Description:
The data come from the RNA Mapping Database (RMDB), library OK2TRN. The record gives the reactivity of an RNA of 177 nucleotides to DMS and 2A3. For 2A3, 2,516 sequencing reads were counted. Reactivities are given for positions 27 through 126. For 2A3 the reverse transcriptase was SuperScript II with manganese. DMS (dimethyl sulfate) methylates the pairing face of unpaired adenines and cytosines.
[RMDB]
RNA sequence: GGGAACGACUCGAGUAGAGUCGAAAACCAGACCUAAGGCCCUGUUUUCUCUGGGGAAGCCCUUCUCAUAGCCCAGGGCGGGGCUAGGAUUGAAACCCAGCUGGUCUGGCUCCAGAGACCUGCCCUGUCUCCCAAUUAUAUUCGUAUAAUUGGGAGAAAAAGAAACAACAACAACAAC
Reactivity to DMS in 0.01 (KOAc 150mM, MgCl2 10mM, bicine 150mM(pH8.5), 24C), signal-to-noise 5, nucleotides 027 to 126: c020c010a040g010a040c010c000u010a120a230g010g010c010c020c010u000g000u010u020u000u010c020u010c020u000g020g020g000g000a120a190g000c080c060c030u000u000c060u000c060a100u010a150g000c030c020c000a050g000g000g010c030g000g000g000g010c010u000a030g000g000a080u000u000g000a110a110a160c110c010c020a110g010c120u000g000g020u000c000u000g000g010c040u000c030c050a100g000a130g010a070c080c030u010g000c010c010c030u000g010
Reactivity to 2A3 in 0.01 (KOAc 150mM, MgCl2 10mM, bicine 150mM(pH8.5), 24C), signal-to-noise 2, nucleotides 027 to 126: c000c000a000g040a010c000c020u020a030a100g070g010c000c000c020u030g050u060u220u180u090c030u030c010u030g020g010g020g040a060a010g060c010c020c000u110u090c040u020c090a160u170a180g020c020c010c000a000g050g000g000c000g010g010g010g020c000u000a010g000g000a020u030u160g060a080a040a020c000c000c020a020g040c040u050g010g050u020c020u030g020g010c000u030c020c010a020g020a030g020a200c020c030u130g000c030c000c000u060g060